RNA sequence: GGGAACGACUCGAGUAGAGUCGAAAAACUAGUCGAUCCUCGUACAGUACGUACGUACGCUAGGACGAUCAUCUAGCGAUCUGAGCUAGACGUGCAGACAUGCUAGGAUCACUGAUGAUAUAUGUACCAUGGGAGUAGCUUUCGAGCUACUCCCAUGAAAAGAAACAACAACAACAAC
Reactivity to DMS in 0.01 (KOAc 150mM, MgCl2 10mM, bicine 150mM(pH8.5), 24C), signal-to-noise 5, nucleotides 027 to 126: a100c050u010a040g020u000c060g030a030u000c010c020u010c080g030u000a010c050a110g020u000a080c180g030u000a030c050g010u010a050c110g000c070u010a090g020g020a170c190g010a070u010c040a070u000c120u000a060g020c060g010a050u000c040u010g000a160g010c010u010a120g010a080c030g030u010g000c090a060g000a090c130a120u000g000c020u000a140g020g000a020u000c000a030c020u000g010a050u010g000a080u010a100u010a100u020g000u000a080c110
Reactivity to 2A3 in 0.01 (KOAc 150mM, MgCl2 10mM, bicine 150mM(pH8.5), 24C), signal-to-noise 3, nucleotides 027 to 126: a040c040u050a030g000u010c150g050a080u010c010c010u000c030g010u020a050c040a070g070u030a030c010g030u020a000c040g010u000a020c030g020c030u060a030g080g060a070c060g030a050u050c000a050u020c060u190a060g070c030g130a050u000c030u060g040a000g180c000u030a080g060a210c030g030u050g080c020a030g010a070c000a010u050g000c010u010a030g010g020a000u000c010a000c010u030g040a070u070g060a010u060a030u040a030u220g130u090a100c010
The data come from the RNA Mapping Database (RMDB), library OK2TRN.
An RNA of 177 nucleotides, treated with DMS and 2A3 and read out base by base.
The RNA was probed in 150 mM KOAc, 10 mM MgCl2 and 150 mM bicine (pH 8.5) at 24 C.
Reactivities are given for positions 27 through 126.
The DMS profile rests on 4,307 reads.
DMS adducts were read by reverse transcription with MarathonRT.
2A3 adducts were read by reverse transcription with SuperScript II with manganese.